Chemical mapping of a 177-nucleotide RNA with DMS.
RNA sequence: GGGAACGACUCGAGUAGAGUCGAAAAUGCCAUGACAAACCUGCUUCUUCGCUUAAAUUUAAAAUUUGUAACACGAAAGUCGAGGCAGCUAUGACUUUAGUAGAUGCGAGACCCAUAAUAGAGUUAAAAUACUACUGACCUUCGGGUCAGUAGUAUUAAAAGAAACAACAACAACAAC
Reactivity to DMS in 0.01 (KOAc 150mM, MgCl2 10mM, bicine 150mM(pH8.5), 24C), signal-to-noise 1, nucleotides 027 to 126: u020g030c050c050a130u020g020a060c110a030a080a090c100c050u010g000c050u000u000c040u000u000c010g000c080u000u000a050a050a070u020u000u030a100a090a120a150u020u020u000g000u010a080a160c130a070c050g000a050a040a040g010u010c040g000a040g010g000c060a010g000c020u010a110u000g000a070c030u000u030u000a060g010u010a090g010a050u010g010c010g000a130g010a260c010c010c020a070u000a040a080u000a080g010a090g000u000u000a030a090

It was measured as part of the RMDB library OK2TRN. DMS adducts were read by reverse transcription with MarathonRT. For DMS, 829 sequencing reads were counted. Values are in units of 0.01, from 0 to 300, in steps of 10.